[RMDB]
RNA sequence: GGGAACGACUCGAGUAGAGUCGAAAAGAGGUUACGGAGUUAGGAGACUAACUGGACAACCAUGCACGCUCCAGUUAGUCACCUAGAGAGUUCUGUCUCUAGGUCUGGCGUGCAGAGUCAGAGGCGGGCAGUCUUGAUUAUUCGUAGUCAGGACUGCAAAAGAAACAACAACAACAAC
Reactivity to DMS in 0.01 (KOAc 150mM, MgCl2 10mM, bicine 150mM(pH8.5), 24C), signal-to-noise 9, nucleotides 027 to 126: g010a080g010g010u000u000a090c100g010g010a080g010u000u000a050g010g010a140g010a070c000u000a010a010c000u000g010g000a100c120a090a110c110c110a120u010g010c070a060c090g000c120u000c030c010a020g000u000u000a030g010u000c050a020c000c000u000a000g000a030g000a070g010u010u010c160u010g010u000c000u000c000u000a030g000g000u000c050u000g010g000c040g010u000g010c050a060g000a100g010u000c060a060g010a080g000g010c060g010g010
Reactivity to 2A3 in 0.01 (KOAc 150mM, MgCl2 10mM, bicine 150mM(pH8.5), 24C), signal-to-noise 9, nucleotides 027 to 126: g050a020g040g010u100u090a040c090g030g020a070g030u070u060a040g040g050a050g000a020c000u000a010a000c000u010g010g010a020c020a050a030c080c070a060u170g070c080a030c080g030c070u010c010c000a000g000u010u020a010g010u020c010a010c000c000u000a000g000a000g000a000g040u220u110c060u180g090u020c000u000c000u010a030g020g010u000c030u020g030g000c020g010u040g020c030a020g020a010g100u050c040a010g000a020g070g040c020g010g070

An RNA of 177 nucleotides, treated with DMS and 2A3 and read out base by base. Source: RMDB library OK2TRN, as collected in RNAgym.